The record gives the reactivity of an RNA of 207 nucleotides to 2A3. It was measured as part of the RMDB library OK3TST.
RNA sequence: GGGAACGACUCGAGUAGAGUCGAAAAUAAUUAAGUUUUGAAAUCAGGAAGUAUAAGUCUUCCAACUUUUUUCUCCUUUUACAAGACUAUUUUGGCGAUUGAGGGUCCAUUGCAAUUCCAUACAAAUCUGUGGAUCAGCUUUUGCAUUUCUGCAAAAGCCUGACGUACCUUUCGAGGUACGUCAGGCAAAAGAAACAACAACAACAAC
Reactivity to 2A3 in 0.01 (KOAc 150mM, MgCl2 10mM, bicine 150mM(pH8.5), 24C), signal-to-noise 2, nucleotides 027 to 156: u100a000a000u210u060a060a150g030u030u050u010u160g130a080a090a060u090c140a060g000g010a000a000g010u020a100u100a300a070g160u000c000u050u010c000c000a020a000c060u060u060u010u000u070u010c060u230c050c000u080u140u020u020a040c040a100a030g020a020c000u000a070u000u000u000u070g040g000c040g000a000u010u010g020a240g010g000g010u000c000c000a000u000u010g000c000a040a130u090u000c050c010a000u010a090c100a060a210a140u170c100u160g000u050g000g030a020u050c010a020g050c060u020u030u030u080g000c010a020u010u160u120c080u160g010c030a000a020a170a000
Record summary:
The RNA was probed in 150 mM KOAc, 10 mM MgCl2 and 150 mM bicine (pH 8.5) at 24 C. The 2A3 profile rests on 585 reads.